Record summary:
The data come from the RNA Mapping Database (RMDB), library RNAMAK. The record gives the reactivity of an RNA of 207 nucleotides to DMS and 2A3.

RNA sequence: GGGAACGACUCGAGUAGAGUCGAAAAAUGAGGCUUCGGCCUCAUAAUAAGGGGUCAAGGAGAGGUGGAGCCUACACUGAAGCCUCCACGGUGUGAGGCGUUGAAACUACCCACCUCCUUGACGGAGGCACCCAAGACACAUUGCUUCGGCAAUGAACUCUAUAAGACCUUUCGAGGUCUUAUAGAGAAAAGAAACAACAACAACAAC
Reactivity to DMS in 0.01 (KOAc 150mM, MgCl2 10mM, bicine 150mM(pH8.5), 24C), signal-to-noise 2, nucleotides 027 to 156: a030u000g000a040g010g050c010u000u020c300g040g020c020c000u000c010a000u010a040a090u000a130a110g000g020g060g010u000c050a040a060g010g000a030g020a110g020g000u000g010g010a280g050c000c010u000a050c030a040c050u000g010a050a090g000c000c000u000c000c000a300c060g030g020u010g040u010g020a040g020g020c020g010u000u000g020a090a110a090c140u010a170c130c030c020a060c010c000u000c000c000u000u000g010a060c070g010g000a050g040g040c050a050c020c010c020a240a190g000a130c110a140c090a060u000u010g020c000u000u000c220g040g030c020a040a060u000g010a030a120
Reactivity to 2A3 in 0.01 (KOAc 150mM, MgCl2 10mM, bicine 150mM(pH8.5), 24C), signal-to-noise 3, nucleotides 027 to 156: a010u020g000a010g000g000c050u060u090c300g150g000c030c010u000c010a000u010a000a000u050a030a020g230g000g060g010u010c000a000a000g030g020a080g020a020g020g270u000g000g020a040g010c010c000u000a010c010a010c000u020g010a060a030g010c000c000u000c000c010a010c010g020g000u000g010u060g180a050g000g000c030g040u050u200g150a140a070a050c080u170a110c020c000c010a000c010c010u010c000c000u000u000g000a010c000g000g000a000g000g010c000a010c000c000c000a030a030g130a020c070a010c000a110u000u020g000c000u040u080c210g100g000c000a000a000u020g000a040a040